Structure probing data (2A3) for a 177-nucleotide construct.
[RMDB]
RNA sequence: GGGAACGACUCGAGUAGAGUCGAAAACGGCCGUCACUACCGACAAUAUUGCCGCCCUGAAACAGGGCACGUCAGGUAUUAAGCUGCAGACCAGCACGGAGCAGGGCAACCGUGCUAAAUACCAGACGGAUCCUGUCCGAUUCGUCGGACAGGAUCCAAAAGAAACAACAACAACAAC
Reactivity to 2A3 in 0.01 (KOAc 150mM, MgCl2 10mM, bicine 150mM(pH8.5), 24C), signal-to-noise 2, nucleotides 027 to 126: c000g000g000c030c010g150u120c030a000c090u060a050c020c000g040a030c050a110a090u180a150u240u200g040c040c010g000c040c000c000u000g110a050a050a040c100a100g000g000g030c010a000c000g000u000c020a100g000g000u000a020u070u030a160a070g050c040u030g010c050a010g000a120c020c030a000g060c000a000c000g000g000a040g100c100a140g020g020g020c000a040a040c000c000g020u000g000c000u010a000a070a000u220a040c010c000a040g040a020c090
The reactions ran in a buffer of 150 mM KOAc, 10 mM MgCl2 and 150 mM bicine (pH 8.5), at 24 C. Source: RMDB library OK1LIB, as collected in RNAgym. 2A3 adducts were read by reverse transcription with SuperScript II with manganese.